[RMDB]
RNA sequence: GGGAACGACUCGAGUAGAGUCGAAAAGAGCUCGACAUUCCUUAAGGUCGUUCUUUCCGACCCAUACAAGGUUCCGCUGCCUGCAUUGUUCCAAGAGUGUCUUGGACAAAAGCAGGAAGUGGAACCUAUCUCUUGCAACUUUCGAGUUGCAAGAGAUAAAAGAAACAACAACAACAAC
Reactivity to DMS in 0.01 (KOAc 150mM, MgCl2 10mM, bicine 150mM(pH8.5), 24C), signal-to-noise 4, nucleotides 027 to 126: g000a130g000c070u000c010g000a030c020a080u010u010c160c070u000u020a120a120g010g000u000c010g010u010u000c010u000u010u010c070c020g000a180c020c020c040a120u020a100c210a160a040g000g020u000u000c000c000g020c000u000g000c000c000u000g030c000a220u010u000g000u020u010c000c000a000a020g010a300g020u030g010u010c010u000u000g000g000a020c000a010a030a060a270g020c010a000g000g000a010a010g030u010g000g010a000a000c000c000u000
Reactivity to 2A3 in 0.01 (KOAc 150mM, MgCl2 10mM, bicine 150mM(pH8.5), 24C), signal-to-noise 9, nucleotides 027 to 126: g090a020g030c050u020c030g010a010c010a100u140u170c030c020u100u140a110a050g060g000u000c000g010u020u020c000u030u010u010c030c030g080a060c010c010c020a040u100a230c090a080a030g000g000u000u000c000c000g010c000u010g030c000c000u000g010c010a060u030u030g060u210u060c000c000a010a000g040a020g100u300g120u110c010u000u000g000g000a000c000a000a020a010a010g000c000a000g000g000a000a000g000u010g000g000a000a000c000c000u000